[RMDB]
RNA sequence: GGGAACGACUCGAGUAGAGUCGAAAAUUAUCUUCAUAAGUCAGAAGUUCACACUUAAGGGUGUAGUUCCAGUACAUGAAGAAGUAUAAGGGUAAUUUCUCCAUAGCUUUAAAGCUAAAAAAUAAAAUAAAGUAAUCUAUUUCGAUAGAUUACUUUAAAAAGAAACAACAACAACAAC
Reactivity to 2A3 in 0.01 (KOAc 150mM, MgCl2 10mM, bicine 150mM(pH8.5), 24C), signal-to-noise 3, nucleotides 027 to 126: u080u020a040u030c000u030u000c010a030u020a170a050g030u010c010a020g020a170a010g150u030u020c010a010c010a000c000u070u080a110a120g180g040g000u040g000u050a130g010u010u030c010c010a040g050u140a010c040a050u020g020a010a000g000a040a010g090u090a110u040a250a080g050g000g080u070a140a100u020u040u010c040u020c010c010a060u040a020g000c010u130u190u300a180a230a000g000c010u150a170a010a000a000a000a000u180a010a060a000a040
Reactivity to DMS in 0.01 (KOAc 150mM, MgCl2 10mM, bicine 150mM(pH8.5), 24C), signal-to-noise 2, nucleotides 027 to 126: u010u010a030u010c000u000u010c040a050u010a060a050g020u000c000a150g000a170a150g020u000u040c030a040c010a010c000u000u010a090a130g010g010g010u010g000u000a050g010u000u000c020c030a090g020u010a030c060a110u010g010a170a140g000a030a080g010u010a020u000a050a040g000g000g060u000a020a050u040u010u010c060u050c000c090a090u010a010g010c000u000u030u020a100a110a090g000c000u000a000a000a010a060a050a160u020a110a020a030a130